Structure probing data (2A3 and DMS) for a 207-nucleotide construct.

RNA sequence: GGGAACGACUCGAGUAGAGUCGAAAAGAAGCCAAGAGGAAAGGUUAUGACAUGCGGGUAGAUGCCAUUCCUAUCAAGGCAGCCAAGGCCUCCAGAGAUAUUGCAAGUGAAGUAAGUAUACUUGGAAAGUUAUUUGCCUUAGCUUUGGCUCAAAGAAUAAAUAUACCGUAUUCGUACGGUAUAUUUAAAAAGAAACAACAACAACAAC
Reactivity to 2A3 in 0.01 (KOAc 150mM, MgCl2 10mM, bicine 150mM(pH8.5), 24C), signal-to-noise 6, nucleotides 027 to 156: g090a040a000g000c020c010a020a020g040a040g040g070a060a040a020g030g020u130u130a050u150g050a060c050a080u110g030c090g030g070g030u090a050g020a090u060g030c010c010a010u030u030c010c010u050a070u110c050a020a040g030g000c030a000g000c010c000a020a030g040g000c020c010u010c040c000a030g020a000g000a120u040a040u120u100g030c020a040a050g050u080g140a090a030g040u090a050a000g030u020a060u020a210c020u020u010g020g050a060a050a030g050u080u060a070u060u090u080g020c000c000u030u040a010g010c000u040u030u010g010g000c000u010c040a080a130a030g070a040a060
Reactivity to DMS in 0.01 (KOAc 150mM, MgCl2 10mM, bicine 150mM(pH8.5), 24C), signal-to-noise 4, nucleotides 027 to 156: g010a160a080g020c020c000a100a140g010a140g030g010a090a110a070g010g030u000u010a060u020g020a050c020a040u000g020c040g030g020g040u010a090g010a080u000g030c010c020a080u000u000c030c000u000a130u000c050a090a190g020g020c030a090g010c050c020a000a070g020g010c010c010u000c050c000a100g010a120g020a100u000a050u000u000g000c030a050a100g020u010g020a100a130g020u000a040a100g010u000a100u000a030c020u000u000g030g000a060a080a180g000u000u000a060u000u010u010g010c020c030u000u000a100g010c000u000u000u000g000g020c000u010c040a060a060a110g010a120a190
DMS adducts were read by reverse transcription with MarathonRT.